Chemical mapping of a 177-nucleotide RNA with 2A3. The data come from the RNA Mapping Database (RMDB), library M2PK50. Reactivities are given for positions 27 through 126. 2A3 adducts were read by reverse transcription with SuperScript II with manganese. The reactions ran in a buffer of 150 mM KOAc, 10 mM MgCl2 and 150 mM bicine (pH 8.5), at 24 C.
RNA sequence: GGGAACGACUCGAGUAGAGUCGAAAACUCUGCUAAUUCGUUAGCAGAGGUACACUGGGACGGGUCGGGAGGGGGAUACUCGCGGUCCCAACAAGAAUCCAGCAAGCACAUUAUUCGUAAUGUGCAACGCGAAAAUUUAUUUCGAUAAAUUUUCGCGAAAAGAAACAACAACAACAAC
Reactivity to 2A3 in 0.01 (KOAc 150mM, MgCl2 10mM, bicine 150mM(pH8.5), 24C), signal-to-noise 1, nucleotides 027 to 126: c030u000c010u000g000c010u000a020a030u070u070c130g110u060u030a000g010c000a000g000a000g000g000u020a060c130a000c070u110g000g010g080a030c100g020g000g140u210c100g020g010g080a290g010g020g000g060g030a020u060a080c010u010c020g020c030g090g010u030c040c030c000a000a000c040a020a030g050a010a050u050c050c000a010g060c120a210a020g000c010a010c010a010u000u010a010u000u130c210g040u040a020a010u000g000u010g000c020a010a020